RNA sequence: GGGAACGACUCGAGUAGAGUCGAAAAUUAGCAUGCUAUAAUGGUCGUCCGACUGGUACAUUCACUGUUGUAAUGCGCCCUAACUACACAAUUAAGGGUUCCUUUCUGUGUGGUUCUUGUGGUAGUGCAAAGUCUACUUGUUCGCAAGUAGACUUUGAAAAGAAACAACAACAACAAC
Reactivity to 2A3 in 0.01 (KOAc 150mM, MgCl2 10mM, bicine 150mM(pH8.5), 24C), signal-to-noise 2, nucleotides 027 to 126: u060u030a010g000c030a050u070g000c020u100a000u060a260a070u090g010g000u020c040g040u000c020c010g030a110c080u090g000g060u160a040c010a050u000u140c000a030c050u080g000u120u030g060u050a050a060u080g040c000g020c030c010c000u000a020a010c020u020a000c020a000c010a020a180u070u040a030a030g140g150g000u170u270c010c030u050u060u000c020u030g000u020g000u010g000g020u030u010c030u090u060g050u130g010g070u080a100g040u100g030
Reactivity to DMS in 0.01 (KOAc 150mM, MgCl2 10mM, bicine 150mM(pH8.5), 24C), signal-to-noise 4, nucleotides 027 to 126: u000u000a090g010c030a060u010g010c050u010a050u010a040a070u000g000g020u000c130g010u000c060c040g010a110c140u000g000g030u000a010c050a070u000u000c110a060c120u000g010u000u000g000u010a040a080u000g010c050g020c030c000c050u000a030a030c020u000a020c010a020c020a010a070u010u010a040a030g000g010g020u010u000c020c010u000u000u000c090u000g020u000g010u000g000g000u000u000c150u000u000g020u010g040g010u000a080g020u010g010
The record gives the reactivity of an RNA of 177 nucleotides to 2A3 and DMS. The DMS profile rests on 5,508 reads. For DMS the reverse transcriptase was MarathonRT. For 2A3 the reverse transcriptase was SuperScript II with manganese. The reactions ran in a buffer of 150 mM KOAc, 10 mM MgCl2 and 150 mM bicine (pH 8.5), at 24 C.